Structure probing data (2A3 and DMS) for a 177-nucleotide construct. Reactivities are given for positions 27 through 126. The DMS profile rests on 1,267 reads. 2A3 adducts were read by reverse transcription with SuperScript II with manganese. The 2A3 profile rests on 2,701 reads. The reactions ran in a buffer of 150 mM KOAc, 10 mM MgCl2 and 150 mM bicine (pH 8.5), at 24 C.
RNA sequence: GGGAACGACUCGAGUAGAGUCGAAAAUGAAAUAACUAGCAUGCAUAAGACGAGGUAGAGCGCGCCCUCUACCAAAAGAUGUGUGUAAAAACGCACGUGUAGGCGCGGCUACACAAAUAAACAAAAACGUAACUUAUGAGUUCGCUCAUAAGUUACGAAAAGAAACAACAACAACAAC
Reactivity to 2A3 in 0.01 (KOAc 150mM, MgCl2 10mM, bicine 150mM(pH8.5), 24C), signal-to-noise 2, nucleotides 027 to 126: u110g040a060a020a060u170a050a040c100u060a050g000c000a020u040g000c020a020u030a110a070g170a110c110g130a070g020g000u000a010g000a000g000c080g000c000g010c060c050c000u000c020u010a000c030c010a020a070a000a000g060a010u030g010u000g000u000g000u060a050a020a060a000a040c060g050c030a030c090g000u000g000u010a020g000g020c030g000c000g080g020c040u030a020c020a010c000a000a080a090u160a120a050a010c050a030a060a010a020a000
Reactivity to DMS in 0.01 (KOAc 150mM, MgCl2 10mM, bicine 150mM(pH8.5), 24C), signal-to-noise 2, nucleotides 027 to 126: u020g010a130a060a080u010a080a160c060u010a130g020c000a020u000g030c010a030u000a060a020g010a140c200g010a230g000g020u010a000g010a040g020c070g020c120g000c100c010c020u010c010u000a010c010c010a050a040a060a030g010a010u000g000u000g010u030g020u000a030a090a050a090a200c150g020c040a050c100g010u020g000u000a030g000g020c060g010c070g020g000c030u000a030c010a010c030a030a080a040u020a110a050a040c080a000a060a060a060a040